Structure probing data (DMS and 2A3) for a 177-nucleotide construct. Reactivities are given for positions 27 through 126. The RNA was probed in 150 mM KOAc, 10 mM MgCl2 and 150 mM bicine (pH 8.5) at 24 C.
RNA sequence: GGGAACGACUCGAGUAGAGUCGAAAAAAGGCUCUUUACCUUUUGACGUUUAGUUAAAUUUGCGAAAUAAAAUUGAUGUCUCGAAGACAUGUGCUUCAUAUUUUGAUGCUCAUGUUCAAGAUCAGCACAAUUAAUCCUCCUUCGGGAGGAUUAAUUGAAAAGAAACAACAACAACAAC
Reactivity to DMS in 0.01 (KOAc 150mM, MgCl2 10mM, bicine 150mM(pH8.5), 24C), signal-to-noise 5, nucleotides 027 to 126: a020a020g000g010c070u000c090u020u020u020a180c000c000u000u000u000u010g000a150c060g000u010u020u020a080g010u010u030a030a080a100u020u000u020g010c050g000a090a070a090u020a060a040a060a100u010u010g000a060u000g000u020c090u000c060g010a190a150g000a020c000a000u000g000u000g000c010u010u010c000a020u030a130u020u030u010u020g000a010u000g000c000u000c010a010u000g000u010u000c040a060a210g010a070u000c090a070g000c100a140
Reactivity to 2A3 in 0.01 (KOAc 150mM, MgCl2 10mM, bicine 150mM(pH8.5), 24C), signal-to-noise 4, nucleotides 027 to 126: a000a000g090g000c070u090c000u070u150u130a120c010c000u080u040u010u110g050a020c040g030u050u070u200a130g020u030u080a060a100a120u130u140u130g100c060g070a080a020a010u160a040a110a090a030u140u120g040a020u090g050u010c030u020c090g050a110a030g030a020c020a000u000g030u000g000c010u030u000c000a060u040a300u300u230u140u050g010a010u010g000c000u000c020a000u000g000u040u040c030a020a000g020a040u080c040a000g030c050a000